[RMDB]
RNA sequence: GGGAACGACUCGAGUAGAGUCGAAAAGACAUGCGGCCAUCUUCGCCAGAGCUUGCCGACGCCUUCGCUCGCGGUGUGGUAUCUCAGGGCGUCAAUGUCAUCCAACUGGGGCUUACCUCUACCGACCCCUAUCAUCACCGUUCGCGGUGAUGAUAGGAAAAGAAACAACAACAACAAC
Reactivity to DMS in 0.01 (KOAc 150mM, MgCl2 10mM, bicine 150mM(pH8.5), 24C), signal-to-noise 2, nucleotides 027 to 126: g010a080c080a030u000g020c070g000g000c030c070a090u000c050u000u010c050g000c020c020a130g010a080g000c040u010u000g020c000c050g000a050c110g020c020c020u000u000c110g000c080u010c070g020c070g000g000u020g020u020g010g000u000a060u000c040u000c010a040g000g010g000c060g000u020c090a070a070u000g010u010c020a080u000c050c060a090a140c090u010g000g000g000g000c120u000u010a070c040c020u000c050u000a070c030c040g000a170c040c050
Reactivity to 2A3 in 0.01 (KOAc 150mM, MgCl2 10mM, bicine 150mM(pH8.5), 24C), signal-to-noise 2, nucleotides 027 to 126: g020a010c030a010u130g020c050g050g000c050c020a080u070c060u140u090c040g030c030c000a030g020a010g030c050u090u120g000c030c040g030a050c030g060c000c000u080u130c060g040c070u050c060g020c040g000g030u030g000u020g040g060u080a130u030c050u030c030a030g010g000g030c020g020u030c010a040a060u100g000u060c000a050u040c020c000a040a050c040u050g030g010g000g000c030u050u040a070c000c000u000c020u060a040c040c000g060a090c000c000